RNA sequence: GGGAACGACUCGAGUAGAGUCGAAAACUCGAAAGAGACCUGCAUAUCUUAGGCAGAUUAACAAGUCAUGUCUGAAAAGCGAAAGCCCUAAGAUAUGCAGCUGUGAAGACUUGACGCAGAACACACAAUGGACUACUAAUUUCGAUUAGUAGUCCAUAAAAGAAACAACAACAACAAC
Reactivity to DMS in 0.01 (KOAc 150mM, MgCl2 10mM, bicine 150mM(pH8.5), 24C), signal-to-noise 6, nucleotides 027 to 126: c000u020c010g010a130a100a110g000a040g010a140c260c000u000g010c000a000u000a010u000c000u000u000a000g000g000c010a040g010a030u000u010a110a160c060a020a020g000u000c030a150u020g000u010c000u000g000a150a090a110a110g010c020g000a090a090a120g000c000c000c000u000a010a010g010a010u000a000u000g000c000a000g000c060u000g010u000g010a080a140g000a020c020u000u010g000a300c010g010c040a010g000a190a070c150a080c200a110c170a100
Reactivity to 2A3 in 0.01 (KOAc 150mM, MgCl2 10mM, bicine 150mM(pH8.5), 24C), signal-to-noise 8, nucleotides 027 to 126: c000u000c000g020a020a030a020g080a010g040a070c000c000u000g000c000a000u000a000u000c000u000u000a000g010g000c000a000g000a040u060u050a090a060c020a020a000g010u010c010a040u090g030u000c010u010g100a220a190a140a040g020c030g050a060a020a010g020c000c000c000u000a000a000g000a000u000a000u000g000c000a000g000c000u010g000u010g040a090a040g010a010c000u010u010g000a020c000g010c020a010g080a160a030c050a010c010a010c040a160